[RMDB]
Source: RMDB library 15KREP, as collected in RNAgym. An RNA of 177 nucleotides, treated with DMS and 2A3 and read out base by base. 2A3 adducts were read by reverse transcription with SuperScript II with manganese. The DMS profile rests on 3,078 reads. The RNA was probed in 150 mM KOAc, 10 mM MgCl2 and 150 mM bicine (pH 8.5) at 24 C.

RNA sequence: GGGAACGACUCGAGUAGAGUCGAAAAACUAAUGGUGGUUACAAUUCUUGGCAUUUAGUCGAGGGUGAACUAUUGGUGCAAGACUUACGCUUAAAUAAGCUCCUGCAUUGGUCUGAUCAAACCAUAUUCAUAUAGAUCUGUUCGCAGAUCUAUAUGAAAAAGAAACAACAACAACAAC
Reactivity to DMS in 0.01 (KOAc 150mM, MgCl2 10mM, bicine 150mM(pH8.5), 24C), signal-to-noise 1, nucleotides 027 to 126: a080c040u010a050a080u020g010g020u010g000g000u010u000a110c100a130a060u010u010c020u000u000g020g020c000a220u000u010u010a100g020u000c020g010a030g000g000g010u000g000a070a040c050u000a050u000u000g000g030u000g010c050a040a080g000a080c020u000u000a040c140g010c140u000u000a050a080a090u000a040a080g010c100u000c030c030u000g010c050a070u000u000g020g010u000c050u020g000a100u000c090a110a080a080c010c010a040u000a090u010
Reactivity to 2A3 in 0.01 (KOAc 150mM, MgCl2 10mM, bicine 150mM(pH8.5), 24C), signal-to-noise 4, nucleotides 027 to 126: a000c030u060a060a000u050g040g020u010g020g050u100u060a080c060a070a040u050u020c000u020u010g020g010c010a100u110u130u300a060g000u010c020g010a020g010g040g010u040g020a020a000c020u010a040u030u060g030g000u030g000c020a030a020g020a020c020u050u050a030c070g040c040u070u150a090a080a060u070a100a030g030c060u010c000c020u020g010c010a030u020u060g030g000u010c050u040g050a100u090c060a010a010a070c020c000a010u020a120u110

Values cover nucleotides 27 to 126.